[RMDB]
RNA sequence: GGGAACGACUCGAGUAGAGUCGAAAAGCACUAGAGGGCGUAACGGGUGGGUGUAACCCAACUCUAGGUGUGCUGAUUAGCGGGCUUGACUCCGUAACAAAUAGGCACUGGUGGUAAAAAGCAUCCCUGACCAUAUACAUCUUCGGAUGUAUAUGAACAUGGACACAUAGUUCGCUAUGUGUCCAUGAAAAGAAACAACAACAACAAC
Reactivity to DMS in 0.01 (KOAc 150mM, MgCl2 10mM, bicine 150mM(pH8.5), 24C), signal-to-noise 2, nucleotides 027 to 156: g000c030a070c010u000a040g000a040g020g000g000c090g040u000a120a100c070g000g000g050u000g020g000g040u010g000u000a050a210c010c000c030a060a080c030u010c010u000a070g000g010u000g030u000g030c030u000g000a160u010u000a160g000c070g000g000g070c100u010u020g010a120c120u000c010c000g020u000a190a170c090a030a060a100u010a140g000g010c040a030c020u000g020g000u000g030g000u000a030a050a010a080a070g020c010a090u000c020c010c000u000g010a140c100c000a030u000a010u010a010c000a000u000c000u000u000c300g020g010a030u000g030u010a010u000a000u000g000a030a190
Chemical mapping of a 207-nucleotide RNA with DMS. The DMS profile rests on 3,553 reads.